Source: RMDB libraries RFM100 and RFMREP, as collected in RNAgym. The record gives the reactivity of an RNA of 177 nucleotides to 2A3 and DMS. For 2A3 the reverse transcriptase was SuperScript II with manganese. DMS adducts were read by reverse transcription with MarathonRT. For 2A3, 3,262 sequencing reads were counted. In probing experiments dimethyl sulfate is read out at A N1 and C N3, which are open when not base-paired.
RNA sequence: GGGAACGACUCGAGUAGAGUCGAAAAUUUUCUGGAAACGAUGAUUUUUCUGAAGACAUGGUGCCGAUAUACUCAGUCAUUUGUUUGUUAAGGCAUCAUAUCGGGAUGAUCUUAUGCUGACUAGCCCAUAUAGGGAUCUGUUCGCAGAUCCCUAUAUAAAAGAAACAACAACAACAAC
Reactivity to 2A3 in 0.01 (KOAc 150mM, MgCl2 10mM, bicine 150mM(pH8.5), 24C), signal-to-noise 4, nucleotides 027 to 126: u040u040u030u040c020u010g050g030a050a070a020c040g030a070u110g010a020u120u000u020u000u000c020u040g060a110a040g090a030c020a030u000g000g010u010g030c010c000g010a020u050a010u030a230c040u050c030a050g190u050c100a210u100u230u120g060u010u040u020g040u020u040a040a020g010g000c000a000u000c000a000u000a030u010c020g020g000g000a000u040g000a000u000c020u030u110a090u160g060c030u010g030a080c020u010a030g010c030c000c000
Reactivity to DMS in 0.01 (KOAc 150mM, MgCl2 10mM, bicine 150mM(pH8.5), 24C), signal-to-noise 5, nucleotides 027 to 126: u010u010u030u010c020u020g000g010a090a090a090c080g000a060u020g000a030u000u000u020u010u000c010u010g030a070a140g010a080c160a020u000g020g010u000g000c000c000g000a170u010a040u010a020c050u000c020a030g040u030c280a120u020u040u000g010u000u000u010g010u000u010a090a240g020g010c000a010u010c010a000u000a030u010c010g010g000g000a030u010g010a010u010c020u010u000a060u030g010c070u020g010a180c030u000a070g010c010c010c040